The record gives the reactivity of an RNA of 177 nucleotides to 2A3 and DMS. For 2A3, 6,100 sequencing reads were counted. The reactions ran in a buffer of 150 mM KOAc, 10 mM MgCl2 and 150 mM bicine (pH 8.5), at 24 C. The DMS profile rests on 18,219 reads. DMS adducts were read by reverse transcription with MarathonRT.

RNA sequence: GGGAACGACUCGAGUAGAGUCGAAAAUCGCGUAUAAUGGAUUAUCUAAGAGCCAAUGUGAUGAUUUGGCCAAGUGGAUGGUUCAAUCAAAAGUGACAGGUCUAGACGUUGGUUUUAACGAUUUGAAACGUGAUUAAUAGUUCGCUAUUAAUCACGUAAAAGAAACAACAACAACAAC
Reactivity to 2A3 in 0.01 (KOAc 150mM, MgCl2 10mM, bicine 150mM(pH8.5), 24C), signal-to-noise 7, nucleotides 027 to 126: u030c010g000c040g050u110a040u070a150a190u110g060g000a030u030u020a010u040c030u030a080a000g050a040g060c000c000a010a010u040g040u060g130a260u060g020a040u030u010u060g000g000c020c000a180a100g100u040g070g030a040u010g000g030u060u030c020a020a020u030c030a030a040a070a070g080u060g050a030c030a040g040g070u020c040u060a070g000a080c020g020u020u070g020g050u020u040u000u070a110a030c050g020a090u060u050u090g170a170a150
Reactivity to DMS in 0.01 (KOAc 150mM, MgCl2 10mM, bicine 150mM(pH8.5), 24C), signal-to-noise 7, nucleotides 027 to 126: u010c020g010c070g030u020a080u020a090a100u020g000g000a070u000u000a040u000c020u000a130a110g010a160g020c010c000a010a000u000g010u020g020a180u030g010a060u020u010u000g010g000c010c020a070a080g020u020g010g010a060u010g010g000u000u020c040a030a030u010c110a060a070a100a130g010u020g000a050c110a070g010g010u010c040u010a100g000a050c070g020u010u000g000g000u000u000u010u020a050a120c130g000a080u010u010u010g000a100a080